[RMDB]
RNA sequence: GGGAACGACUCGAGUAGAGUCGAAAAUGGGAUUGGCUUGCUAAAAUCUUACAAGCUAUUCUUGCUAUUCCUGGGGGAAUUAUAGGGAUUUUAAGUAAGAUAUGGGAAUUUCUUCAAACUCUCUCAACGCACAACUUCGGUUCGCCGAAGUUGUGCGAAAAGAAACAACAACAACAAC
Reactivity to 2A3 in 0.01 (KOAc 150mM, MgCl2 10mM, bicine 150mM(pH8.5), 24C), signal-to-noise 1, nucleotides 027 to 126: u060g010g010g000a000u030u120g010g000c000u000u000g030c110u050a090a130a090a150u210c060u090u200a000c000a000a000g030c000u000a000u000u020c000u040u160g000c000u040a110u150u050c000c030u060g050g000g000g030g160a000a040u280u090a110u040a160g000g010g010a150u000u000u000u240a060a250g000u110a080a000g110a100u190a090u060g040g030g040a060a000u080u070u000c000u010u030c040a040a040a040c000u030c010u000c000u030c030a060a060
The record gives the reactivity of an RNA of 177 nucleotides to 2A3. 2A3 is a SHAPE reagent: it acylates the 2'-hydroxyl of flexible nucleotides of all four kinds.